[RMDB]
RNA sequence: GGGAACGACUCGAGUAGAGUCGAAAAAGCUCGUAAAAAAGGCGGAAACUAAUAUAAUCGCAGACGAUUAUAACUACGCAGUAGCAGCUUAAUAACUGUCAUACUGCCGUCUCUCCAGUCCUCCGCUCAUGAGGGUUGGGUCCGAGGCGUCGACCAAGUACAUUGUAAACUUCGGUUUACAAUGUACAAAAGAAACAACAACAACAAC
Reactivity to DMS in 0.01 (KOAc 150mM, MgCl2 10mM, bicine 150mM(pH8.5), 24C), signal-to-noise 2, nucleotides 027 to 156: a080g010c010u000c030g020u000a000a050a080a110a080a030g020g000c020g000g020a100a090a120c080u000a050a140u000a030u000a030a030u010c020g010c070a220g010a140c040g020a020u000u000a040u000a050a110c120u010a090c060g000c020a010g010u000a130g000c000a010g000c000u000u000a140a090u000a140a120c000u000g000u020c020a120u000a020c000u010g020c000c020g010u000c020u000c050u000c010c010a020g010u000c010c000u000c000c040g020c090u000c110a050u000g000a040g030g060g010u000u000g000g000g010u010c060c050g000a130g000g000c060g020u010c030g020a170c010c030a070a300
Reactivity to 2A3 in 0.01 (KOAc 150mM, MgCl2 10mM, bicine 150mM(pH8.5), 24C), signal-to-noise 5, nucleotides 027 to 156: a000g040c030u040c030g060u100a020a020a020a050a020a020g020g000c050g020g010a110a070a000c070u070a050a190u030a030u010a040a020u010c010g030c180a100g180a300c070g010a030u010u010a010u030a080a070c100u180a030c060g010c020a000g000u010a010g010c000a000g000c010u070u100a090a020u080a150a040c020u000g030u050c050a050u020a020c000u000g000c010c000g000u010c000u000c000u000c000c000a000g010u000c000c000u000c010c030g130c190u150c130a100u230g000a000g010g000g000u000u010g020g000g000u050c090c040g000a000g000g040c010g030u010c020g020a050c020c030a100a020
An RNA of 207 nucleotides, treated with DMS and 2A3 and read out base by base. For DMS, 4,127 sequencing reads were counted. 2A3 adducts were read by reverse transcription with SuperScript II with manganese. The 2A3 profile rests on 4,412 reads.